Chemical mapping of a 177-nucleotide RNA with 2A3 and DMS. Conditions: 150 mM KOAc, 10 mM MgCl2 and 150 mM bicine (pH 8.5), 24 C.

[RMDB]
RNA sequence: GGGAACGACUCGAGUAGAGUCGAAAAGAUAUGGACGUGUGAUGCUUUUGACGCAUUCUUGAUCGGAAACGAUCAAGAUGCGAUAAGCAUACACGUCCUAAGUCAAACGUAUGCUUCGGCAUACGAAGACAUGGAUACACUUCGGUGUAUCCAUGUCAAAAGAAACAACAACAACAAC
Reactivity to 2A3 in 0.01 (KOAc 150mM, MgCl2 10mM, bicine 150mM(pH8.5), 24C), signal-to-noise 4, nucleotides 027 to 126: g040a040u070a060u180g020g000a000c000g020u020g070u150g290a050u020g010c020u120u090u150u300g210a160c090g000c000a020u290u050c020u000u000g000a000u000c020g000g000a070a040a050c000g000a010u020c000a000a000g000a000u010g000c000g010a020u020a040a000g000c000a010u000a000c000a000c000g000u000c000c000u000a010a000g010u000c010a060a000a050c000g010u010a010u010g000c000u000u100c300g150g000c000a010u020a010c010g030a060a020
Reactivity to DMS in 0.01 (KOAc 150mM, MgCl2 10mM, bicine 150mM(pH8.5), 24C), signal-to-noise 3, nucleotides 027 to 126: g000a070u000a300u010g010g000a000c000g030u010g010u000g010a020u000g010c000u000u000u000u030g030a220c110g000c010a010u000u010c000u020u000g010a000u020c000g000g010a110a140a190c000g010a010u000c010a010a010g010a000u000g000c000g030a070u000a000a010g020c000a020u000a010c000a010c000g000u000c000c000u000a000a050g000u010c040a110a130a300c030g010u000a000u000g010c000u010u010c250g040g000c000a000u000a010c000g000a090a110